[RMDB]
RNA sequence: GGGAACGACUCGAGUAGAGUCGAAAAGAUAUGGAAGAAGGUGUUCAGCAUCGAUCUCAUUUCGGAAACGAAAUGAGGGAGCUGGCACUUCUUCCUAAGUCAAAAGUUUGAUCUUCGGAUCAAACAAGGACAAAUAUAAGUUCGCUUAUAUUUGUCCAAAAGAAACAACAACAACAAC
Reactivity to DMS in 0.01 (KOAc 150mM, MgCl2 10mM, bicine 150mM(pH8.5), 24C), signal-to-noise 5, nucleotides 027 to 126: g010a050u010a300u020g000g000a020a000g010a020a020g000g010u010g020u010u010c010a000g030c000a300u010c210g010a040u020c000u010c000a010u000u000u000c010g000g000a050a070a120c010g000a010a020a000u000g000a020g000g000g000a020g030c000u010g000g000c030a020c000u000u010c000u000u000c000c000u000a000a070g010u000c040a120a080a180a170g010u000u000u000g000a010u000c000u000u020c250g020g000a010u000c000a000a010a000c020a110a110
Reactivity to 2A3 in 0.01 (KOAc 150mM, MgCl2 10mM, bicine 150mM(pH8.5), 24C), signal-to-noise 6, nucleotides 027 to 126: g010a020u060a020u120g000g020a000a010g010a020a020g210g110u160g080u300u300c020a010g000c010a110u300c060g020a050u000c010u000c010a000u000u010u010c000g000g000a020a040a030c010g000a000a000a000u000g000a000g000g000g000a010g000c010u020g020g000c010a020c020u000u000c000u000u000c000c000u000a010a000g020u000c010a020a030a000a270g000u020u010u010g010a010u000c030u050u110c300g180g000a000u000c000a010a010a000c010a010a090
An RNA of 177 nucleotides, treated with DMS and 2A3 and read out base by base. The data come from the RNA Mapping Database (RMDB), library TTRDES. The reactions ran in a buffer of 150 mM KOAc, 10 mM MgCl2 and 150 mM bicine (pH 8.5), at 24 C. In probing experiments dimethyl sulfate is read out at A N1 and C N3, which are open when not base-paired. For 2A3, 18,536 sequencing reads were counted.